Description: An RNA of 177 nucleotides, treated with 2A3 and DMS and read out base by base.

RNA sequence: GGGAACGACUCGAGUAGAGUCGAAAAGAUAUGGAUAGGGUGUGAAGGUCUAUAAUCUCGGAAACGAGGUAGACCCACACACCUAUCCUAAGUCAAACUAAUGUCCUCGUUCGCGAGGACAUUAGAACGGAUUACCUGAGUUCGCUCAGGUAAUCCGAAAAGAAACAACAACAACAAC
Reactivity to 2A3 in 0.01 (KOAc 150mM, MgCl2 10mM, bicine 150mM(pH8.5), 24C), signal-to-noise 1, nucleotides 027 to 126: g000a010u050a020u110g020g000a000u000a000g070g000g000u000g010u020g190a300a140g030g020u030c030u000a110u040a300a300u170c010u000c030g020g050a100a080a050c020g000a000g030g010u000a000g000a000c000c070c000a000c000a000c010a010c000c010u010a000u000c000c000u020a040a000g010u000c030a120a020a140c020u000a010a010u010g020u020c000c010u000c000g020u080u090c240g000c000g200a000g020g000a010c000a000u010u000a000g000a010a000
Reactivity to DMS in 0.01 (KOAc 150mM, MgCl2 10mM, bicine 150mM(pH8.5), 24C), signal-to-noise 1, nucleotides 027 to 126: g010a050u000a300u020g000g000a000u000a000g000g010g090u000g000u020g000a210a110g010g040u000c000u000a100u010a210a150u000c000u000c010g010g010a080a060a230c010g010a000g040g000u000a010g000a000c000c010c120a020c000a010c000a100c000c020u010a000u000c010c000u000a000a090g010u000c010a110a160a210c030u000a000a010u010g000u000c000c000u010c000g000u020u010c200g000c010g010a010g000g000a000c000a000u010u000a000g010a070a110
It was measured as part of the RMDB library TTRDEL.
Values cover nucleotides 27 to 126.
For 2A3, 1,821 sequencing reads were counted.
Reactivities are rounded to 0.1 and cut off at 0 and 3.
DMS (dimethyl sulfate) methylates the pairing face of unpaired adenines and cytosines.